[RMDB]
RNA sequence: GGGAACGACUCGAGUAGAGUCGAAAAGGGCAUGGUUAGUGUAUGGUAUAAACAAGAAGAUGCUGAAAUUGAACCACUCGAAGAAGAAGUUGAUUUUACAAUUACAACAGUGGAAGAAUUAUUAACCAAUUUCCUGUGGAUUCGUCCACAGGAAAUUAAAAGAAACAACAACAACAAC
Reactivity to DMS in 0.01 (KOAc 150mM, MgCl2 10mM, bicine 150mM(pH8.5), 24C), signal-to-noise 3, nucleotides 027 to 126: g000g020g010c020a110u000g000g000u010u020a050g000u000g030u020a070u030g010g010u020a070u020a070a040a100c170a070a110g000a100a120g020a030u010g010c010u000g000a080a050a050u020u000g010a090a100c040c020a010c010u000c050g010a130a180g000a060a070g000a060a120g000u000u000g010a180u050u000u020u000a080c100a020a050u000u040a060c070a040a190c230a030g000u000g000g010a060a130g020a130a040u020u030a050u010u000a050a060c090c070
Reactivity to 2A3 in 0.01 (KOAc 150mM, MgCl2 10mM, bicine 150mM(pH8.5), 24C), signal-to-noise 3, nucleotides 027 to 126: g020g000g000c020a010u060g030g040u010u000a030g000u080g060u110a100u160g010g000u110a040u070a050a170a010c090a120a000g150a030a010g030a030u090g000c040u060g010a000a090a090u120u110g000a010a030c000c000a000c000u010c020g200a140a100g000a060a000g030a060a060g120u000u000g100a150u090u050u000u110a060c030a050a030u060u050a060c030a080a030c020a070g080u060g070g000a020a070g000a040a220u080u080a010u170u120a110a010c000c000